RNA sequence: GGGAACGACUCGAGUAGAGUCGAAAACAGUAAAAGUGGCAACAGUGGUGAUUAAUAGCCUGAUAGGGUGCUGCAGAGGCCCACUGUAUUGCUACUAAAGGUCUCUGCAGACGAUGAAAGACAUCGAAUAUUAUCCUGCAUUCGUGCAGGAUAAUAUAAAAGAAACAACAACAACAAC
Reactivity to 2A3 in 0.01 (KOAc 150mM, MgCl2 10mM, bicine 150mM(pH8.5), 24C), signal-to-noise 5, nucleotides 027 to 126: c020a010g110u220a010a090a110a010g130u070g060g000c020a030a010c000a050g010u030g060g010u090g060a080u060u220a120a130u110a130g030c000c010u030g050a050u170a120g120g030g000u100g020c000u000g000c010a000g000a020g010g000c020c000c010a030c010u000g020u020a090u070u250g050c090u030a020c010u020a010a020a000g030g000u000c000u000c000u000g000c010a000g000a000c000g000a000u010g070a080a040a010g060a000c000a010u000c000g000a010
Reactivity to DMS in 0.01 (KOAc 150mM, MgCl2 10mM, bicine 150mM(pH8.5), 24C), signal-to-noise 7, nucleotides 027 to 126: c040a100g020u050a030a060a100a110g020u010g010g000c030a060a030c060a040g020u010g020g010u020g010a130u020u030a090a100u020a130g010c040c010u000g010a110u050a080g010g000g030u020g010c010u000g000c000a020g000a010g000g000c000c000c050a190c140u000g010u000a050u030u050g020c160u010a030c030u010a030a170a100g000g000u010c000u000c000u000g000c000a020g000a090c010g010a010u010g000a070a100a100g000a220c020a010u010c000g010a230
Chemical mapping of a 177-nucleotide RNA with 2A3 and DMS. The data come from the RNA Mapping Database (RMDB), library OK1LIB. As a SHAPE reagent, 2A3 marks flexible, mostly unpaired nucleotides at the ribose 2'-OH. DMS (dimethyl sulfate) methylates the pairing face of unpaired adenines and cytosines. For DMS, 19,665 sequencing reads were counted. The RNA was probed in 150 mM KOAc, 10 mM MgCl2 and 150 mM bicine (pH 8.5) at 24 C.